[RMDB]
RNA sequence: GGGAACGACUCGAGUAGAGUCGAAAAUGGCGAGGGCGAAACAGGAUCGACAAGGGUGUAAAGAUCGCUCUUUUACUCGGCAUGAUACCACCGUUAUCGGGUCAACAGAGUAGUUGCAAAUGACAACAAAAGAAUCGCGCGUUCGCGCGCGAUUCAACACUCACCAAAAGUUCGCUUUUGGUGAGUGAAAAGAAACAACAACAACAAC
Reactivity to DMS in 0.01 (KOAc 150mM, MgCl2 10mM, bicine 150mM(pH8.5), 24C), signal-to-noise 2, nucleotides 027 to 156: u000g000g030c070g000a040g030g050g040c000g050a080a070a190c040a090g000g020a110u000c020g000a040c080a110a100g000g020g010u000g010u000a030a070a170g010a100u000c020g020c060u000c030u010u000u000u010a060c020u000c030g010g050c010a160u010g030a160u010a080c010c030a190c030c000g010u000u010a030u000c070g000g030g010u000c030a080a120c080a060g000a130g000u000a090g020u000u000g010c000a060a060a100u000g010a100c050a040a080c050a000a020a110a100g000a030a000u000c020g050c010g040c010g010u000u010c300g020c020g000c010g050c000g010a000u020u000c000a070a120
Reactivity to 2A3 in 0.01 (KOAc 150mM, MgCl2 10mM, bicine 150mM(pH8.5), 24C), signal-to-noise 3, nucleotides 027 to 156: u100g040g020c030g010a000g000g040g000c020g040a010a010a020c050a040g000g070a080u050c040g060a050c070a090a070g070g020g010u030g050u090a050a090a030g060a090u090c020g050c030u050c010u020u060u040u030a070c050u050c000g010g020c000a020u070g020a010u060a060c000c060a020c000c000g040u050u050a060u110c040g000g000g030u020c010a000a020c030a030g100a010g070u150a000g010u060u000g010c020a040a120a290u140g030a120c010a060a000c000a010a130a010a060g000a000a000u010c000g000c010g000c000g030u040u030c200g010c000g010c010g010c000g100a000u000u000c000a000a000
Description:
Structure probing data (DMS and 2A3) for a 207-nucleotide construct. It was measured as part of the RMDB library M2RFPK. The DMS profile rests on 2,955 reads. The RNA was probed in 150 mM KOAc, 10 mM MgCl2 and 150 mM bicine (pH 8.5) at 24 C.